[RMDB]
RNA sequence: GGGAACGACUCGAGUAGAGUCGAAAAAUAAAGGUCAUAUGUACGCGAGUCAAGUGCACAGACUCGAGCGAAAGCUCGGCGAAAGCCGCGUACAUGUGACCGUCGGCAAGUGUACUGUCGACAAAAAAGAUUAUCAACCAUUCGUGGUUGAUAAUCUAAAAGAAACAACAACAACAAC
Reactivity to 2A3 in 0.01 (KOAc 150mM, MgCl2 10mM, bicine 150mM(pH8.5), 24C), signal-to-noise 2, nucleotides 027 to 126: a000u300a020a170a020g000g000u000c000a000u000a000u000g000u000a000c000g000c000g000a000g000u010c060a140a000g010u000g000c010a000c000a020g010a000c000u000c000g010a000g030c010g050a120a010a000g000c010u000c000g010g010c000g050a110a050a000g020c000c000g010c000g000u000a000c000a000u010g000u000g000a000c010c000g000u000c000g010g000c010a110a140g000u000g010u000a020c000u000g010u010c010g000a000c010a000a050a000a000a030
Reactivity to DMS in 0.01 (KOAc 150mM, MgCl2 10mM, bicine 150mM(pH8.5), 24C), signal-to-noise 2, nucleotides 027 to 126: a040u010a120a090a140g000g020u000c000a000u000a010u000g010u000a000c010g010c010g000a020g000u000c000a070a170g000u000g000c000a000c000a250g010a000c000u000c000g010a000g010c010g000a140a060a220g000c000u000c020g020g000c000g010a180a090a130g000c010c010g030c010g000u000a010c000a000u000g010u000g000a010c000c010g020u000c000g010g000c010a010a090g020u000g000u000a000c010u010g000u000c000g020a010c010a000a020a090a050a050

The data come from the RNA Mapping Database (RMDB), library M2PK90. The record gives the reactivity of an RNA of 177 nucleotides to 2A3 and DMS. The RNA was probed in 150 mM KOAc, 10 mM MgCl2 and 150 mM bicine (pH 8.5) at 24 C. The DMS profile rests on 2,759 reads. For DMS the reverse transcriptase was MarathonRT.